[RMDB]
RNA sequence: GGGAACGACUCGAGUAGAGUCGAAAAGGCGACCUCCAGCGGCACGUUGCGCAGGAACAGCUUGUUCAUCUUCAGCCGCUCCUGCCCAGCUGGUGUGUCGUCGUGCUGCUGCUUCGCCCACUGCACACCUGGAUUAUCCAUUCGUGGAUAAUCCAGGAAAAGAAACAACAACAACAAC
Reactivity to 2A3 in 0.01 (KOAc 150mM, MgCl2 10mM, bicine 150mM(pH8.5), 24C), signal-to-noise 9, nucleotides 027 to 126: g010g000c000g000a000c000c000u010c010c000a000g000c010g080g040c080a050c250g130u170u130g030c050g010c030a010g000g020a010a010c020a030g120c040u170u230g060u150u150c130a220u080c150u170u080c060a020g010c020c010g000c000u000c000c000u010g000c010c030c020a020g000c000u010g000g020u010g020u040g000u010c000g000u000c000g000u020g000c020u020g010c010u020g010c010u060u070c060g070c010c000c010a030c030u050g010c020a020c000a020
Reactivity to DMS in 0.01 (KOAc 150mM, MgCl2 10mM, bicine 150mM(pH8.5), 24C), signal-to-noise 3, nucleotides 027 to 126: g000g030c000g020a010c010c010u000c010c010a000g010c010g030g030c080a090c180g000u010u090g000c300g010c000a030g020g000a010a010c000a120g010c070u020u040g000u000u060c200a090u030c130u030u000c100a050g020c030c030g000c030u000c010c020u000g010c000c030c110a150g010c020u010g020g000u000g010u050g010u010c010g010u010c010g010u010g020c020u000g040c050u010g000c060u000u010c110g000c000c010c020a200c030u010g010c030a080c140a240